The record gives the reactivity of an RNA of 177 nucleotides to 2A3 and DMS. The reactions ran in a buffer of 150 mM KOAc, 10 mM MgCl2 and 150 mM bicine (pH 8.5), at 24 C.
RNA sequence: GGGAACGACUCGAGUAGAGUCGAAAAGUGGGCUCUGAAUUGGUUAAUAAUGUGCAGUACUUGCUAAAUUGCUGACUUCCAGAUGUGGAAAAUAUCUUUCUUGUUUAGGACCUAUGUAACCUGAUUGAAGAGUAUAAGUGUUCGCACUUAUACUCUUAAAAGAAACAACAACAACAAC
Reactivity to 2A3 in 0.01 (KOAc 150mM, MgCl2 10mM, bicine 150mM(pH8.5), 24C), signal-to-noise 4, nucleotides 027 to 126: g050u020g020g030g020c030u000c010u020g080a100a080u080u040g030g020u050u050a030a020u090a080a050u150g090u090g090c020a010g010u040a050c040u050u050g060c020u070a120a140a140u080u050g000c020u020g020a060c020u070u020c020c010a070g040a300u170g060u070g120g060a060a020a020a060u110a030u000c030u010u060u020c020u040u030g030u000u040u010a030g000g010a010c010c020u050a060u080g030u020a060a060c010c010u060g030a170u100u130g060
Reactivity to DMS in 0.01 (KOAc 150mM, MgCl2 10mM, bicine 150mM(pH8.5), 24C), signal-to-noise 8, nucleotides 027 to 126: g030u000g010g000g020c020u000c030u000g000a060a070u000u000g010g010u000u000a040a070u010a060a100u010g010u000g010c020a030g020u010a040c120u000u010g010c110u010a050a090a080u000u000g010c030u000g000a080c060u000u000c040c040a080g010a100u010g020u000g010g000a060a060a080a120u000a040u000c080u000u000u000c020u000u000g010u000u000u000a050g010g000a070c070c050u000a050u010g010u000a070a130c040c020u010g010a120u010u010g000
The DMS profile rests on 14,827 reads. For 2A3 the reverse transcriptase was SuperScript II with manganese. DMS (dimethyl sulfate) methylates the pairing face of unpaired adenines and cytosines.